Structure probing data (DMS and 2A3) for a 207-nucleotide construct.
[RMDB]
RNA sequence: GGGAACGACUCGAGUAGAGUCGAAAAGUCAUGCUCUCGCUGCCUAAUGGCGGUGCGGGAAACCCACUCUAAAGUCCUUAGGGUUAGCCCCUUAAGGCGGGGUUCGGAGGCACCUGGCAACAGAAGCUGAAACUGUGCACAUUCGUGUGCACAGUAAAUGCCAGAAAGUAUUCGUACUUUCUGGCAUAAAAGAAACAACAACAACAAC
Reactivity to DMS in 0.01 (KOAc 150mM, MgCl2 10mM, bicine 150mM(pH8.5), 24C), signal-to-noise 1, nucleotides 027 to 156: g000u000c060a080u000g010c010u010c000u010c020g050c000u000g010c000c010u020a080a130u010g040g030c060g050g070u000g030c020g030g000g000a090a030a120c020c000c040a240c160u000c120u000a100a070a150g020u000c000c000u010u000a040g000g020g000u000u000a210g000c180c210c000c010u000u010a030a020g000g060c030g030g020g020g020u000u000c090g000g010a300g030g000c020a070c010c030u090g000g000c020a070a200c040a090g080a060a060g030c020u000g000a130a090a020c000u000g020u000g000c020a000c000a140u000u000c230g030u000g030u000g000c000a000c030a010g020u010a000a040
Reactivity to 2A3 in 0.01 (KOAc 150mM, MgCl2 10mM, bicine 150mM(pH8.5), 24C), signal-to-noise 4, nucleotides 027 to 156: g040u040c020a050u210g040c020u040c010u020c010g000c000u020g020c020c010u300a300a190u210g020g000c030g050g050u060g020c040g020g000g000a060a060a050c010c010c010a060c040u100c110u190a130a110a300g300u010c010c000u000u000a000g010g000g010u040u060a030g050c010c020c000c010u020u050a000a000g000g000c000g000g000g010g000u040u190c080g100g020a030g020g000c000a010c000c000u000g300g010c000a010a010c000a000g030a010a000g000c010u030g040a040a000a000c000u020g000u000g020c000a010c000a040u040u170c210g080u010g000u000g000c000a000c000a010g000u000a000a000
Conditions: 150 mM KOAc, 10 mM MgCl2 and 150 mM bicine (pH 8.5), 24 C.
High 2A3 reactivity points to a flexible backbone, as in loops and unpaired stretches.
For DMS, 2,086 sequencing reads were counted.
For 2A3 the reverse transcriptase was SuperScript II with manganese.
Source: RMDB library M2RFPK, as collected in RNAgym.